[RMDB]
RNA sequence: GGGAACGACUCGAGUAGAGUCGAAAAGUACGGUAUUCUUUGGACGGUAAUUUCAGAACAGAGGUUGAUCCCGACCUAUCUGCUUUCUAUGUUAAGGAUGGUAAAUACUUUACAAGUGAACCACCCGAGAGGCCGAAGUUCGCUUCGGCCAAAAGAAACAACAACAACAAC
Reactivity to 2A3 in 0.01 (KOAc 150mM, MgCl2 10mM, bicine 150mM(pH8.5), 24C), signal-to-noise 2, nucleotides 027 to 129: g030u080a020c100g000g010u050a170u110u000c000u000u130u100g000g030a000c010g020g000u040a060a090u040u040u060c050a010g020a110a060c050a050g030a050g000g000u000u000g020a130u000c000c000c000g000a000c020c000u020a140u070c050u080g000c020u000u020u040c010u050a150u140g140u170u110a010a010g030g000a020u020g060g000u040a030a060a060u080a020c030u030u060u140a040c010a000a100g000u000g060a030a000c000c000a000c000c000c080g020a000g000a000
Reactivity to DMS in 0.01 (KOAc 150mM, MgCl2 10mM, bicine 150mM(pH8.5), 24C), signal-to-noise 2, nucleotides 027 to 129: g030u030a020c140g000g000u000a020u000u040c000u000u040u050g020g020a160c100g040g000u040a100a060u010u000u110c070a120g000a000a000c170a080g050a050g000g010u000u040g040a120u000c000c010c020g010a000c040c000u000a030u000c010u000g040c000u000u040u020c100u000a020u080g030u000u000a030a110g020g020a020u010g000g020u050a030a060a150u060a060c030u040u060u060a070c280a080a080g040u000g020a130a020c020c000a090c030c010c020g010a160g020a050

Structure probing data (2A3 and DMS) for a 170-nucleotide construct. DMS adducts were read by reverse transcription with MarathonRT. The DMS profile rests on 5,505 reads.